[RMDB]
RNA sequence: GGGAACGACUCGAGUAGAGUCGAAAAAUGAUUCCCUUAGUAACGGCGAGUGAACAGGGAAAAGCCCAAAUUUGUAAUCUGGCACUUUUUACAAGUGUCCGAGUUGUAAUUUGUAGAACUGUUAUCCUCUUCCUUAUAAGUUCGCUUAUAAGGAAGAAAAAGAAACAACAACAACAAC
Reactivity to DMS in 0.01 (KOAc 150mM, MgCl2 10mM, bicine 150mM(pH8.5), 24C), signal-to-noise 5, nucleotides 027 to 126: a100u020g010a250u000u000c000c000c010u010u000a050g020u000a080a020c010g000g050c250g000a300g020u000g010a140a140c210a030g000g000g010a010a020a090a150g010c010c000c000a060a070a100u020u010u020g010u010a100a100u010c040u000g020g000c000a010c000u000u000u000u010u040a100c180a020a010g010u000g020u010c000c050g000a020g010u000u000g000u000a060a080u010u010u010g010u010a080g010a080a100c180u010g000u000u000a030u000c030c110
Reactivity to 2A3 in 0.01 (KOAc 150mM, MgCl2 10mM, bicine 150mM(pH8.5), 24C), signal-to-noise 2, nucleotides 027 to 126: a000u230g050a090u020u030c000c000c000u020u010a020g000u000a000a000c000g180g020c220g040a030g020u000g000a030a010c000a010g000g000g000a000a030a010a020g000c000c000c020a020a020a050u200u150u110g120u040a050a010u010c000u010g030g010c000a000c000u080u030u030u070u300a060c190a090a010g000u010g040u000c000c000g050a050g060u030u010g020u090a070a170u030u040u120g080u070a050g030a120a030c090u020g020u130u050a100u200c000c020